[RMDB]
RNA sequence: GGGAACGACUCGAGUAGAGUCGAAAAGAGCGCGGCUAGGUGUGGCCUGGCCUAGCGGCUGUAGGCGACACGCCAGUGUGGAUAGUCAGACUUGCGAUAGUUGGGCUGGCUGAGGUAUGCUUGUGCCCUGGAAACCGGUAUUCGUACCGGUUUCCAGAAAAGAAACAACAACAACAAC
Reactivity to DMS in 0.01 (KOAc 150mM, MgCl2 10mM, bicine 150mM(pH8.5), 24C), signal-to-noise 1, nucleotides 027 to 126: g020a090g030c040g020c080g040g000c020u000a040g000g030u010g000u010g060g020c010c010u000g020g030c010c000u010a040g000c260g020g000c000u010g010u000a040g020g000c030g000a120c010a050c080g020c020c010a060g040u000g040u000g010g010a110u010a050g000u010c040a070g010a090c050u010u000g020c040g000a160u020a040g000u000u000g000g010g020c050u010g000g010c010u000g000a110g010g020u000a060u020g020c030u010u000g020u000g030c020c040